[RMDB]
Source information:
An RNA of 177 nucleotides, treated with DMS and 2A3 and read out base by base. The RNA was probed in 150 mM KOAc, 10 mM MgCl2 and 150 mM bicine (pH 8.5) at 24 C. For 2A3, 982 sequencing reads were counted. For 2A3 the reverse transcriptase was SuperScript II with manganese.

RNA sequence: GGGAACGACUCGAGUAGAGUCGAAAAUCAUACAUGGUAGGAUUCGGAGAGAGGUAUCCACAGCAUGUCCAUCACAGAGGCUCCUCACUUCCAUCUGUACAGGUGCACCCUAAUUCCAUACCCUGCACACUUCCGAUGUGUUCGCACAUCGGAAGUGAAAAGAAACAACAACAACAAC
Reactivity to DMS in 0.01 (KOAc 150mM, MgCl2 10mM, bicine 150mM(pH8.5), 24C), signal-to-noise 1, nucleotides 027 to 126: u000c080a100u000a100c150a070u010g000g010u020a120g020g000a070u000u000c070g020g030a010g010a090g000a090g010g050u000a020u000c030c040a070c110a090g050c060a020u020g010u000c090c100a070u000c100a020c090a040g030a090g020g000c040u000c040c030u010c010a030c100u000u000c060c040a030u000c040u010g010u000a060c130a030g000g010u010g010c090a030c020c010c000u010a080a150u010u010c020c020a110u000a070c030c010c010u010g010c060a220
Reactivity to 2A3 in 0.01 (KOAc 150mM, MgCl2 10mM, bicine 150mM(pH8.5), 24C), signal-to-noise 1, nucleotides 027 to 126: u060c010a030u010a170c020a080u090g000g000u030a100g010g060a110u120u000c040g000g010a010g020a030g000a000g120g010u030a010u000c000c060a090c050a030g070c030a030u050g030u060c020c010a040u080c010a030c020a070g150a090g000g040c020u020c010c010u050c010a030c030u060u000c000c020a060u000c030u050g080u050a040c030a040g030g050u020g000c000a100c000c010c000u040a090a150u010u090c010c010a030u030a090c020c000c000u050g000c070a030